[RMDB]
RNA sequence: GGGAACGACUCGAGUAGAGUCGAAAAUCCUAAGUCGUCCUUAAGUUGCUGAUGACCUAGUCGGGAGCGUCGGAAACGACGCGAAGAACGACUAGCAAGGCAACCAUAGGACGAUAUGGAAAACCAAAACGCAUAGUUUCGACUAUGCGUUUUGGAACCAUGUUCAAGUCUUCGGACUUGAACAUGGAAAAGAAACAACAACAACAAC
Reactivity to 2A3 in 0.01 (KOAc 150mM, MgCl2 10mM, bicine 150mM(pH8.5), 24C), signal-to-noise 4, nucleotides 027 to 156: u030c010c000u020a110a040g030u000c000g000u000c020c000u050u020a120a060g000u010u000g000c010u010g040a270u130g020a130c020c010u000a000g000u000c010g000g000g020a050g010c000g000u000c010g020g000a050a070a060c010g000a000c000g000c020g010a020a020g020a010a010c000g000a000c010u000a000g000c020a070a190g010g000c000a000a000c000c010a010u040a030g000g000a000c000g000a000u000a000u010g030g030a020a110a050a070c000c000a010a000a000a000c000g000c010a000u000a010g010u030u080u100c190g020a010c000u000a000u000g000c020g000u000u010u000u000g000g000a000a010
Reactivity to DMS in 0.01 (KOAc 150mM, MgCl2 10mM, bicine 150mM(pH8.5), 24C), signal-to-noise 1, nucleotides 027 to 156: u010c000c000u000a160a140g010u000c010g010u010c000c000u010u000a100a070g010u000u000g010c000u010g020a080u000g010a090c300c000u000a000g030u000c000g000g020g000a300g050c010g030u000c000g040g000a150a180a300c020g010a020c010g000c000g000a040a230g000a160a170c000g010a030c000u000a020g030c000a110a110g030g010c010a010a040c010c030a280u000a020g030g000a010c000g000a010u010a020u030g010g010a080a080a140a210c000c010a010a000a010a020c010g000c000a000u000a010g000u000u000u010c300g000a100c000u000a000u020g000c000g020u000u000u000u000g000g000a100a110
Chemical mapping of a 207-nucleotide RNA with 2A3 and DMS. Reactivities are given for positions 27 through 156. The reactions ran in a buffer of 150 mM KOAc, 10 mM MgCl2 and 150 mM bicine (pH 8.5), at 24 C. Source: RMDB library RNAMAK, as collected in RNAgym. For 2A3 the reverse transcriptase was SuperScript II with manganese.